[RMDB]
RNA sequence: GGGAACGACUCGAGUAGAGUCGAAAAAAUGUGCCUCUACAAUUAGGAUUUUCAACUGGUGUGAACUUUGUUGUUCAGCCAGUUGGUGUUGUAGACACUGAGUGGGGUAACAUGUUAACGGGCAUUGCAAGCGUGACGUUCGCGUCACGCAAAAGAAACAACAACAACAAC
Reactivity to DMS in 0.01 (KOAc 150mM, MgCl2 10mM, bicine 150mM(pH8.5), 24C), signal-to-noise 3, nucleotides 027 to 129: a060a050u010g020u000g020c060c060u010c040u000a000c090a100a050u040u030a120g000g000a120u090u010u070u060c020a030a000c000u000g010g010u030g030u030g020a000a020c000u020u010u090g020u100u000g040u040u000c020a210g020c000c000a080g020u010u010g000g030u000g000u000u090g060u040a020g000a050c060a060c040u090g000a060g030u000g000g010g060g000u020a090a060c110a000u020g010u070u000a120a080c110g030g020g050c070a060u020u060g040c070a050a100
Reactivity to 2A3 in 0.01 (KOAc 150mM, MgCl2 10mM, bicine 150mM(pH8.5), 24C), signal-to-noise 3, nucleotides 027 to 129: a000a040u200g000u000g020c050c020u000c000u050a000c030a050a030u060u080a140g150g040a110u020u020u040u170c000a010a000c010u000g030g040u160g020u030g080a000a000c000u060u100u140g270u300u110g000u160u030c000a020g000c000c010a000g000u000u000g000g000u030g000u040u060g000u000a030g020a020c000a000c050u100g020a030g030u010g000g000g030g000u070a080a020c020a030u060g000u030u070a030a040c060g000g000g000c030a000u010u100g000c020a000a060
Chemical mapping of a 170-nucleotide RNA with DMS and 2A3. For DMS the reverse transcriptase was MarathonRT. The RNA was probed in 150 mM KOAc, 10 mM MgCl2 and 150 mM bicine (pH 8.5) at 24 C. For 2A3, 3,386 sequencing reads were counted. The DMS profile rests on 11,218 reads. As a SHAPE reagent, 2A3 marks flexible, mostly unpaired nucleotides at the ribose 2'-OH. For 2A3 the reverse transcriptase was SuperScript II with manganese.